[RMDB]
RNA sequence: GGGAACGACUCGAGUAGAGUCGAAAACUCGCGCGUUCGACUGCGGCUGUGAGGCGCUGCUGCGAGACCACGCCGCGCUGGCCAGGACCGAGCACGACAACGAACGCGUGCUCAACAACAGGGGCGAAUACGAAUACGAUUUCGAUCGUAUUCGUAUAAAAGAAACAACAACAACAAC
Reactivity to 2A3 in 0.01 (KOAc 150mM, MgCl2 10mM, bicine 150mM(pH8.5), 24C), signal-to-noise 3, nucleotides 027 to 126: c020u030c010g000c010g000c010g020u010u020c020g090a110c080u100g040c010g040g010c040u090g050u040g080a110g000g030c020g010c030u120g020c040u060g000c030g050a090g050a080c020c040a020c050g000c000c000g000c010g000c060u040g050g040c020c030a070g020g030a050c020c040g030a020g020c030a020c100g180a070c050a200a050c060g070a050a010c040g000c000g000u010g000c000u010c010a060a210c030a030a010c020a040g030g000g000g000c020g030a050
Reactivity to DMS in 0.01 (KOAc 150mM, MgCl2 10mM, bicine 150mM(pH8.5), 24C), signal-to-noise 8, nucleotides 027 to 126: c060u000c040g020c040g010c010g010u000u000c010g010a120c110u000g010c040g000g010c010u010g010u000g010a300g010g000c020g010c010u000g010c130u020g020c020g000a090g010a120c110c040a050c070g010c020c030g000c020g010c080u000g010g010c070c050a080g010g000a110c110c080g000a060g000c030a070c060g010a110c120a100a200c090g000a040a050c070g010c000g010u000g000c030u000c050a060a050c110a040a040c090a120g000g000g000g010c120g000a140